This 177-nucleotide RNA was probed chemically with 2A3. 2A3 adducts were read by reverse transcription with SuperScript II with manganese.
RNA sequence: GGGAACGACUCGAGUAGAGUCGAAAAAUAUCAACACAAUGUUAUAUGAAAACUCGUGUAUGAUGUAUAUCUCCCUAAUUGGGACGUUACGACGUUCUAGAAACGUAGUAUGAAGGCGCAGAGGCGUGGUGUGACACGCGUUCGCGCGUGUCACACCAAAAGAAACAACAACAACAAC
Reactivity to 2A3 in 0.01 (KOAc 150mM, MgCl2 10mM, bicine 150mM(pH8.5), 24C), signal-to-noise 1, nucleotides 027 to 126: a000u000a000u040c000a020a000c000a010c010a000a080u180g040u040u060a210u000a000u300g140a070a050a070a010c030u010c050g000u000g000u010a200u020g000a000u000g180u000a020u000a040u080c050u080c030c000c000u070a070a090u060u030g020g010g000a070c030g110u050u010a060c260g000a010c000g040u010u000c020u000a050g100a030a100a040c170g020u020a010g020u000a060u130g200a050a080g060g000c030g000c010a010g090a010g200g000c030g000u020
Source information
Reactivities are given for positions 27 through 126.